[RMDB]
RNA sequence: GGGAACGACUCGAGUAGAGUCGAAAAUUGGGCUUUCUGCGCCAUUGGCUCCAGAUAAGCCAGUGCCGCGGGCGAAAUCAACGCCAUUAAAUCGUCGCGAUUCGGUUUGACGGCAUUAAUGGCCCGCAGCGGGUAAGCUAUUCGUAGCUUACCCGCUAAAAGAAACAACAACAACAAC
Reactivity to 2A3 in 0.01 (KOAc 150mM, MgCl2 10mM, bicine 150mM(pH8.5), 24C), signal-to-noise 2, nucleotides 027 to 126: u050u020g090g040g000c010u000u050u040c010u040g000c080g030c010c010a040u040u170g030g000c000u020c060c000a010g030a200u190a090a000g010c000c110a010g010u040g060c000c030g020c000g030g000g010c020g040a110a000a060u100c040a060a020c130g010c000c000a020u070u060a000a010a000u030c030g040u040c060g010c120g300a300u120u140c000g070g000u050u010u040g030a040c030g000g000c010a000u060u060a050a020u080g060g000c010c000c010g000c000
Reactivity to DMS in 0.01 (KOAc 150mM, MgCl2 10mM, bicine 150mM(pH8.5), 24C), signal-to-noise 2, nucleotides 027 to 126: u020u010g020g000g000c010u000u000u010c010u000g000c300g000c060c000a120u010u020g000g020c020u010c110c020a060g000a050u000a060a010g000c000c000a040g010u000g010c090c020g000c010g010g010g010c030g030a070a100a110u010c110a030a060c070g000c010c000a040u000u010a000a000a030u000c000g040u000c130g000c240g000a160u000u000c040g010g000u000u000u000g020a030c040g000g000c030a040u000u010a060a070u000g000g000c000c010c000g030c060